Structure probing data (DMS and 2A3) for a 177-nucleotide construct. It was measured as part of the RMDB library OK1LIB. As a SHAPE reagent, 2A3 marks flexible, mostly unpaired nucleotides at the ribose 2'-OH. For 2A3, 3,617 sequencing reads were counted. DMS adducts were read by reverse transcription with MarathonRT.
[RMDB]
RNA sequence: GGGAACGACUCGAGUAGAGUCGAAAAACAGCGAUCACGUCGACAUGGGGUUCGGCCUUCGCCAUCGCCAGCGUCGACGUGCCGCUGCCGGAGCCGAUCUCCAACACCACCGGCGCGUCACGGCCAACUCUCGCGUACUAUUCGUAGUACGCGAGAGAAAAGAAACAACAACAACAAC
Reactivity to DMS in 0.01 (KOAc 150mM, MgCl2 10mM, bicine 150mM(pH8.5), 24C), signal-to-noise 1, nucleotides 027 to 126: a090c000a000g000c000g000a120u030c020a000c000g000u000c000g000a000c000a130u000g000g000g000g000u000u010c210g040g040c000c250u040u000c190g030c020c000a040u000c000g000c000c000a020g000c140g000u000c010g000a000c010g000u000g000c300c000g020c000u000g000c040c050g000g020a040g000c010c050g000a080u020c060u000c020c160a170a020c080a070c180c030a120c020c000g000g000c000g010c070g000u000c020a040c080g000g000c080c080a070a160
Reactivity to 2A3 in 0.01 (KOAc 150mM, MgCl2 10mM, bicine 150mM(pH8.5), 24C), signal-to-noise 3, nucleotides 027 to 126: a000c010a000g000c010g040a060u120c010a000c000g000u000c000g010a000c010a020u010g010g000g030g000u080u130c190g060g000c020c100u290u260c240g020c000c000a020u010c030g130c120c000a060g010c070g120u000c000g000a020c000g000u000g000c010c010g000c000u030g030c000c000g000g020a010g030c030c020g060a090u060c020u010c030c010a020a050c030a050c040c030a010c030c040g030g000c060g000c010g060u070c010a060c090g020g000c020c020a040a090